[RMDB]
RNA sequence: GGGAACGACUCGAGUAGAGUCGAAAAAUGGUAGUUAGUCUACUCGCUAUCCUAGUUACUUUGGAGUAAUCUAAAGUGUGUGUAAACGGGCGAAAGUCUGUAAAAUACUGGGGACAUACGGUCAACAAGAACUAGUAGACCUUCGGGUCUACUAGAAUCGAAAGGAGAGUUUCGACUCUCCUUUCGAAAAAGAAACAACAACAACAAC
Reactivity to 2A3 in 0.01 (KOAc 150mM, MgCl2 10mM, bicine 150mM(pH8.5), 24C), signal-to-noise 1, nucleotides 027 to 156: a010u050g050g020u020a030g000u070u120a040g050u060c050u040a040c010u070c030g010c020u040a020u110c020c000u030a050g050u030u120a000c000u000u000u030g020g020a040g060u140a130a130u000c000u030a000a060a000g000u000g000u010g020u000g020u030a000a140a040c000g000g010g040c030g030a060a040a010g000u010c000u000g020u060a060a060a070a000u100a030c010u000g000g000g030g010a020c020a040u140a030c030g080g050u100c090a050a010c010a070a100g050a080a040c020u000a000g010u000a000g000a000c000c000u000u040c150g140g000g000u020c000u000a000c000u000a000g000a000a020
Reactivity to DMS in 0.01 (KOAc 150mM, MgCl2 10mM, bicine 150mM(pH8.5), 24C), signal-to-noise 2, nucleotides 027 to 156: a150u020g060g020u000a040g010u020u010a120g010u010c010u010a030c010u000c030g050c040u000a090u000c040c030u010a080g030u010u000a010c010u000u010u010g030g020a030g000u000a120a140u010c000u000a030a000a000g020u000g050u000g030u000g020u000a040a200a110c020g030g030g010c000g010a170a070a200g000u010c040u000g020u000a020a070a080a080u010a000c050u000g020g010g020g020a060c060a070u010a040c040g000g000u000c130a060a110c050a090a140g010a090a150c000u010a010g000u000a020g010a020c000c020u000u000c300g110g000g050u000c000u000a000c000u010a000g000a080a070